[RMDB]
RNA sequence: GGGAACGACUCGAGUAGAGUCGAAAAUCAUGGGGGUGCCUCCGUGCAGGUUGGAAACCACAGCUGUGCGUCCUUCCCGCUUUCCCUCUUGAUCAGUAGAAGGGUACCCUCCCUGGCCUGCACGUCGCGCCACAAGGAGAUUCGUCUCCUUGUGGCGAAAAGAAACAACAACAACAAC
Reactivity to DMS in 0.01 (KOAc 150mM, MgCl2 10mM, bicine 150mM(pH8.5), 24C), signal-to-noise 1, nucleotides 027 to 126: u000c030a070u010g010g020g000g000g020u000g030c060c050u010c080c030g020u000g000c010a010g010g010u000u000g010g000a080a080a090c090c030a070c040a110g000c060u000g010u000g000c090g000u000c020c030u000u000c000c010c100g020c220u000u000u000c000c010c000u010c060u000u010g010a150u040c180a100g010u000a040g030a050a050g010g010g040u000a200c070c070c010u000c010c040c030u000g000g000c030c000u000g020c020a050c060g000u010c260g000
Reactivity to 2A3 in 0.01 (KOAc 150mM, MgCl2 10mM, bicine 150mM(pH8.5), 24C), signal-to-noise 1, nucleotides 027 to 126: u170c000a120u160g000g000g000g060g000u020g050c000c020u110c020c030g000u030g020c010a020g000g020u030u050g060g100a100a100a060c050c010a020c000a070g190c040u130g050u060g040c030g090u070c010c000u050u020c000c000c000g010c000u160u120u020c010c010c030u040c010u070u200g110a200u070c040a040g060u070a030g090a170a070g130g000g020u060a030c000c000c010u050c000c010c000u010g010g000c000c010u050g000c010a010c010g040u020c050g010